[RMDB]
RNA sequence: GGGAACGACUCGAGUAGAGUCGAAAAAGGUGAUUUCUCCUGCACCUUUAUCAAUGGAGGAACUCGACUUUGCUGUGGGUCCCAAAGGGACCUUUGGUGCAGACAGUUACCGGCGGUGAAGUGUGAGCAUAGGUUCGUGUCUUCGGACACGAACCAAGUAUGCAGUACUGUUCGCAGUACUGCAUACAAAAGAAACAACAACAACAAC
Reactivity to DMS in 0.01 (KOAc 150mM, MgCl2 10mM, bicine 150mM(pH8.5), 24C), signal-to-noise 2, nucleotides 027 to 156: a030g030g040u000g000a300u010u000u000c020u000c010c020u010g030c020a030c020c010u020u010u020a060u010c150a090a100u010g000g020a100g040g010a090a070c040u000c040g030a020c020u000u000u000g020c010u000g020u000g000g010g000u020c000c010c010a120a130a190g060g030g000a020c040c010u000u000u000g010g040u000g030c000a240g010a070c130a140g020u000u000a040c030c060g020g010c090g000g020u010g000a040a050g010u000g000u000g010a090g020c110a140u000a070g030g040u000u000c000g020u000g000u000c010u000u010c300g060g000a040c010a020c000g000a000a000c000c030a010a100
Reactivity to 2A3 in 0.01 (KOAc 150mM, MgCl2 10mM, bicine 150mM(pH8.5), 24C), signal-to-noise 4, nucleotides 027 to 156: a010g010g000u010g000a020u010u050u000c010u020c010c000u110g070c030a010c010c010u150u260u140a050u040c070a030a030u300g020g000a010g010g020a020a030c010u010c010g010a010c010u000u010u010g010c010u020g010u090g010g000g020u000c020c000c000a140a100a080g010g000g000a000c000c000u030u040u070g000g010u000g000c010a040g110a300c040a030g030u050u100a020c000c000g020g000c010g010g010u010g010a020a010g040u060g060u070g100a010g030c060a100u100a200g000g010u000u000c000g000u010g010u000c000u020u080c210g050g000a000c000a000c000g000a000a000c010c000a000a000